The record gives the reactivity of an RNA of 177 nucleotides to 2A3 and DMS.
2A3 adducts were read by reverse transcription with SuperScript II with manganese.
For 2A3, 1,359 sequencing reads were counted.
The data come from the RNA Mapping Database (RMDB), libraries RFM100 and RFMREP.
[RMDB]
RNA sequence: GGGAACGACUCGAGUAGAGUCGAAAAUCUGCAAAGACGCAAGUCGAAGUAUAGGGUGUGACACGUGACCAAUGCCGAAAGAUUAAGGCAAGGGGUUAGCCGCAAGGCGAAGCUCUAAACCCAAGUCCCUCCGGUACAGAUUCGUCUGUACCGGAGGAAAAGAAACAACAACAACAAC
Reactivity to 2A3 in 0.01 (KOAc 150mM, MgCl2 10mM, bicine 150mM(pH8.5), 24C), signal-to-noise 2, nucleotides 027 to 126: u020c000u050g110c110a030a050a070g030a030c000g000c020a000a100g030u030c020g060a060a000g030u020a010u110a090g060g020g010u040g000u000g000a000c000a000c100g020u010g060a020c030c000a060a030u080g000c010c000g110a120a110a040g100a060u070u160a030a030g000g000c010a040a050g010g050g000g070u210u040a000g000c010c040g040c050a100a010g000g000c000g010a000a000g040c000u000c000u040a010a030a060c000c000c000a000a030g050u070c000
Reactivity to DMS in 0.01 (KOAc 150mM, MgCl2 10mM, bicine 150mM(pH8.5), 24C), signal-to-noise 3, nucleotides 027 to 126: u010c090u000g000c080a040a210a150g030a050c040g010c250a090a110g000u000c040g020a130a150g000u030a030u030a060g000g000g010u010g010u010g040a090c060a080c080g040u030g000a040c010c110a020a070u030g020c060c020g000a080a090a100g000a060u000u030a110a200g030g000c000a030a210g000g010g000g000u000u000a300g000c000c000g010c230a030a150g000g030c000g000a050a150g010c010u000c000u000a130a090a040c000c000c000a040a140g010u010c070